[RMDB]
RNA sequence: GGGAACGACUCGAGUAGAGUCGAAAACGGUCCUUCACACAAUGGUAUCAUGAGCAUGUUGGUGGUGUCUAUGACAACUCUAUCACAUGCCCAUUGACAGUUGCAGUAAUUGCUGGAGUUGCUGGUGUAAGUUCUCACUUCGGUGAGAACAAAAGAAACAACAACAACAAC
Reactivity to DMS in 0.01 (KOAc 150mM, MgCl2 10mM, bicine 150mM(pH8.5), 24C), signal-to-noise 4, nucleotides 027 to 129: c100g020g060u020c030c010u000u060c100a120c120a180c080a070a120u040g000g060u030a140u000c030a010u070g000a090g030c020a050u030g040u000u070g040g070u020g000g010u010g020u030c060u100a100u050g030a150c140a150a070c070u020c020u040a030u000c040a070c010a050u010g020c010c030c000a000u000u000g030a030c150a120g040u050u030g010c060a050g020u040a090a080u040u050g000c040u030g040g000a150g000u000u000g040c020u040g020g000u000g060u000a070a090
Reactivity to 2A3 in 0.01 (KOAc 150mM, MgCl2 10mM, bicine 150mM(pH8.5), 24C), signal-to-noise 4, nucleotides 027 to 129: c050g040g010u020c030c000u050u060c000a090c010a000c040a070a090u060g040g000u170a020u210c030a010u060g000a030g080c030a010u000g020u060u120g110g000u000g000g000u040g000u000c050u070a140u260g050a050c010a040a000c020u000c010u050a000u020c000a000c000a000u010g000c000c030c000a000u010u190g040a000c030a050g070u070u040g010c010a050g000u060a130a110u100u080g040c020u050g000g020a030g030u030u120g070c020u060g030g030u050g050u070a100a020
Source: RMDB library 15KLIB, as collected in RNAgym. An RNA of 170 nucleotides, treated with DMS and 2A3 and read out base by base. The RNA was probed in 150 mM KOAc, 10 mM MgCl2 and 150 mM bicine (pH 8.5) at 24 C. For DMS, 11,856 sequencing reads were counted. Values are in units of 0.01, from 0 to 300, in steps of 10.